[RMDB]
RNA sequence: GGGAACGACUCGAGUAGAGUCGAAAAUCUUGGAAGACUUCUUUCAUAUGUAAUGUGUCUAAUAACUCUAAAAUACUUUCUUCGCUUGGUGGGUCAUUUAAUCCAUAAACAAUAUUGUCAUACAAGCUACGAUUGAACAAUUUAGGUUUUUGCGGUAGUACAAAUUAGGUUUCGACCUAAUUUGUACAAAAGAAACAACAACAACAAC
Reactivity to DMS in 0.01 (KOAc 150mM, MgCl2 10mM, bicine 150mM(pH8.5), 24C), signal-to-noise 2, nucleotides 027 to 156: u000c040u020u020g040g020a120a090g050a100c080u010u010c020u010u010u000c010a110u000a140u000g000u020a080a090u000g010u000g010u010c000u000a060a140u000a050a070c040u010c030u010a050a040a080a110u010a120c060u000u000u000c020u010u000c030g010c000u010u000g020g030u000g030g040g000u000c030a100u000u000u000a050a080u000c010c020a070u010a050a060a090c040a060a130u000a100u000u000g000u000c060a180u000a150c040a040a080g000c050u000a050c050g010a100u020u000g000a020a040c070a040a070u000u000u000a090g020g000u000u000u000u010u000g020c060g020g000u000a160
Reactivity to 2A3 in 0.01 (KOAc 150mM, MgCl2 10mM, bicine 150mM(pH8.5), 24C), signal-to-noise 4, nucleotides 027 to 156: u020c020u020u050g030g060a040a030g060a140c070u150u060c030u090u220u030c110a120u210a080u180g040u070a150a090u100g050u020g010u010c040u010a070a110u070a170a100c030u050c030u160a060a040a030a020u070a120c000u020u100u040c000u030u040c040g000c030u000u000g010g010u010g010g010g060u060c020a050u040u080u160a070a080u030c030c020a080u180a060a070a010c030a060a030u110a070u210u140g030u040c010a000u050a230c030a050a010g010c010u030a010c040g050a050u020u060g020a100a010c030a080a050u020u080u090a080g020g010u010u010u020u070u150g070c050g040g020u070a080